Source: RMDB library OK1LIB, as collected in RNAgym. An RNA of 177 nucleotides, treated with 2A3 and DMS and read out base by base.

[RMDB]
RNA sequence: GGGAACGACUCGAGUAGAGUCGAAAAGACAUCAAUGAACGCUGUAACAUUGGCGAAGUCCUUUCGUUUAGGGAGGGAAACCCUUGGAUCUCCGAGGAGAUCUAGGGUCUCUCCUCUCCUGGGACCAACUCACUUAAUGGUUCGCCAUUAAGUGAGUAAAAGAAACAACAACAACAAC
Reactivity to 2A3 in 0.01 (KOAc 150mM, MgCl2 10mM, bicine 150mM(pH8.5), 24C), signal-to-noise 9, nucleotides 027 to 126: g090a020c050a090u130c040a070a100u120g070a120a040c060g040c160u120g050u210a130a060c030a110u070u130g020g020c050g050a040a010g030u030c010c000u050u120u130c050g070u050u090u210a060g010g000g000a000g000g010g000a040a060a050c010c000c000u040u150g040g010a010u000c000u000c010c020g040a150g020g130a000g010a000u000c000u000a000g000g000g000u000c000u000c000u000c000c000u010c000u000c000c010u040g000g020g010a000c010c020a020
Reactivity to DMS in 0.01 (KOAc 150mM, MgCl2 10mM, bicine 150mM(pH8.5), 24C), signal-to-noise 6, nucleotides 027 to 126: g000a120c100a070u030c030a040a050u010g010a060a110c090g000c070u030g010u020a140a170c050a030u010u000g000g000c110g010a100a110g010u010c010c020u010u010u010c100g010u010u010u010a110g010g000g000a000g000g000g000a010a040a020c000c000c000u010u030g030g000a000u000c000u000c010c070g010a240g030g010a010g000a000u000c000u000a000g000g000g000u010c030u010c040u020c000c000u000c020u020c000c040u000g000g010g000a070c030c120a120
Values are in units of 0.01, from 0 to 300, in steps of 10. The RNA was probed in 150 mM KOAc, 10 mM MgCl2 and 150 mM bicine (pH 8.5) at 24 C.